[RMDB]
RNA sequence: GGGAACGACUCGAGUAGAGUCGAAAAGUGUUCGUACCUGGCGCAAGCCAGGGCAAGUGAGGCGCAAGCCUCGCUGACGGCGUGGAAAGGGCUCUCUCUGAGGCCCGAGUACGCUGAAAGUGCCACAGUACACAUUAGUCUUCGGACUAAUGUGUACAAAAGAAACAACAACAACAAC
Reactivity to 2A3 in 0.01 (KOAc 150mM, MgCl2 10mM, bicine 150mM(pH8.5), 24C), signal-to-noise 1, nucleotides 027 to 126: g060u050g030u080u080c030g080u060a160c010c010u000g000g000c000g020c040a090a030g000c000c000a010g000g000g000c000a000a010g000u010g000a010g010g000c020g000c070a020a030g020c030c000u000c000g000c000u000g000a010c030g020g020c030g030u030g030g080a090a060a060g010g010g000c030u060c000u000c010u010c180u300g020a010g020g040c000c010c010g000a000g010u010a000c010g000c000u010g070a120a070a020g080u090g070c020c010a070c030a060
Reactivity to DMS in 0.01 (KOAc 150mM, MgCl2 10mM, bicine 150mM(pH8.5), 24C), signal-to-noise 3, nucleotides 027 to 126: g020u000g010u010u000c040g020u000a150c010c000u000g010g000c000g000c300a110a100g000c000c010a020g010g020g020c120a040a060g010u000g000a010g000g010c010g000c260a090a140g010c010c020u010c000g020c000u000g000a170c030g010g000c050g010u020g000g000a100a170a210g000g000g020c010u010c010u000c020u000c240u020g000a030g000g020c000c000c010g000a040g010u000a060c010g010c010u000g000a060a150a100g000u010g020c070c040a080c150a150
The record gives the reactivity of an RNA of 177 nucleotides to 2A3 and DMS. Values cover nucleotides 27 to 126. It was measured as part of the RMDB library RFMREP. The 2A3 profile rests on 1,678 reads. The reactions ran in a buffer of 150 mM KOAc, 10 mM MgCl2 and 150 mM bicine (pH 8.5), at 24 C. For DMS the reverse transcriptase was MarathonRT.